[RMDB]
RNA sequence: GGGAACGACUCGAGUAGAGUCGAAAACCUGCUUUCCGUCAUCACCGAUGGCCGGCAUGCGGCGAUCGACCUGCGCCUCGUGGAUGCCGACAAUGACAAUGAGGCGGACAACAAGCUCAACAGUCUCAAUUAAUCGGGACUUCGGUCCCGAUUAAUUAAAAGAAACAACAACAACAAC
Reactivity to 2A3 in 0.01 (KOAc 150mM, MgCl2 10mM, bicine 150mM(pH8.5), 24C), signal-to-noise 4, nucleotides 027 to 126: c000c000u020g030c030u040u060u030c020c010g040u020c020a210u020c010a060c130c070g130a110u030g080g000c040c020g000g000c020a030u100g010c020g050g000c010g020a030u070c090g110a110c030c060u150g020c030g020c030c000u040c030g070u050g150g040a030u060g010c020c000g020a040c050a030a190u160g010a080c030a050a060u090g000a020g020g010c000g000g030a020c010a130a020c020a060a000g050c040u050c080a090a160c040a130g150u050c050u050c070
Reactivity to DMS in 0.01 (KOAc 150mM, MgCl2 10mM, bicine 150mM(pH8.5), 24C), signal-to-noise 2, nucleotides 027 to 126: c070c040u060g010c150u010u000u050c020c090g020u000c000a050u020c080a060c130c090g000a090u000g020g130c080c050g010g030c050a070u030g000c050g000g000c000g000a060u050c090g000a110c020c030u020g000c050g000c010c020u000c070g000u060g000g030a090u000g000c000c020g020a070c020a180a030u040g000a300c300a050a040u030g020a040g020g030c120g000g020a140c170a030a020c160a190a120g000c020u000c090a090a000c300a120g010u050c050u060c000